Overview:
This 177-nucleotide RNA was probed chemically with DMS and 2A3. The DMS profile rests on 5,705 reads. The RNA was probed in 150 mM KOAc, 10 mM MgCl2 and 150 mM bicine (pH 8.5) at 24 C.
RNA sequence: GGGAACGACUCGAGUAGAGUCGAAAAGAUAUGGAGUGAACUACAGCGAAACGGCUCGUUGAAAUCGGAAACGAUGGAGAGCCUGAGUAGCUGCACUCCUAAGUCAAAAUCGCGGUUCGCCGCGAAAUCAUGAAUAUACCUUCGGGUAUAUUCAUGAAAAAGAAACAACAACAACAAC
Reactivity to DMS in 0.01 (KOAc 150mM, MgCl2 10mM, bicine 150mM(pH8.5), 24C), signal-to-noise 5, nucleotides 027 to 126: g000a070u010a300u000g010g010a010g020u000g000a050a050c110u020a300c020a010g010c010g000a090a140a210c280g010g000c000u000c000g010u010u010g020a110a110a020u000c000g010g000a120a080a170c010g000a010u000g000g000a120g000a020g000c000c000u000g010a020g010u000a110g000c000u010g000c010a010c000u000c000c000u010a010a080g000u000c040a090a070a110a120u000c010g020c000g000g000u000u010c240g030c020c000g020c000g010a010a050a080
Reactivity to 2A3 in 0.01 (KOAc 150mM, MgCl2 10mM, bicine 150mM(pH8.5), 24C), signal-to-noise 3, nucleotides 027 to 126: g040a010u070a060u170g010g010a010g040u010g010a080a050c110u220a060c300a010g000c000g000a020a000a010c020g000g010c000u000c020g130u250u040g000a040a050a000u010c010g000g010a100a020a040c010g010a010u010g010g030a040g000a000g010c000c000u000g000a000g000u010a000g000c000u010g000c000a000c000u000c000c000u010a110a000g000u010c000a000a000a010a290u040c010g000c020g010g020u070u080c280g000c120c000g020c000g000a020a000a010